[RMDB]
RNA sequence: GGGAACGACUCGAGUAGAGUCGAAAAAGUGCAGUUGCGGGAUCUCAGCUCACUGUAACCUCCACCUCCUGGGUUCAAGUAAUUCUCCUGUGUCAGCCUCCAGAGUAACUUUGAUUACGGCGCACGCCUGUCGACAGAAGUUCGCUUCUGUCGACAGAAAAGAAACAACAACAACAAC
Reactivity to 2A3 in 0.01 (KOAc 150mM, MgCl2 10mM, bicine 150mM(pH8.5), 24C), signal-to-noise 4, nucleotides 027 to 126: a000g120u100g010c030a000g000u050u040g030c020g020g070g050a130u050c020u010c060a010g030c010u010c000a040c040u050g060u150a100a100c000c010u030c040c000a020c000c030u040c000c030u040g090g000g000u060u050c070a070a030g060u040a110a060u080u040c040u000c000c000u080g030u020g060u090c020a010g060c000c000u010c010c010a040g030a030g110u060a070a070c020u050u140u140g100a110u060u090a000c050g030g030c020g010c010a000c010g020c000
Reactivity to DMS in 0.01 (KOAc 150mM, MgCl2 10mM, bicine 150mM(pH8.5), 24C), signal-to-noise 3, nucleotides 027 to 126: a050g020u000g000c080a030g010u000u010g000c100g000g030g020a130u020c050u030c040a070g000c020u000c030a020c040u010g000u020a070a150c060c000u000c060c030a090c070c040u010c030c030u000g000g020g000u040u000c080a020a090g010u010a000a080u020u010c050u000c010c040u000g020u010g020u000c090a130g000c060c000u000c010c020a080g000a100g000u020a070a080c060u010u040u040g030a190u010u020a090c100g020g000c100g000c080a080c120g010c090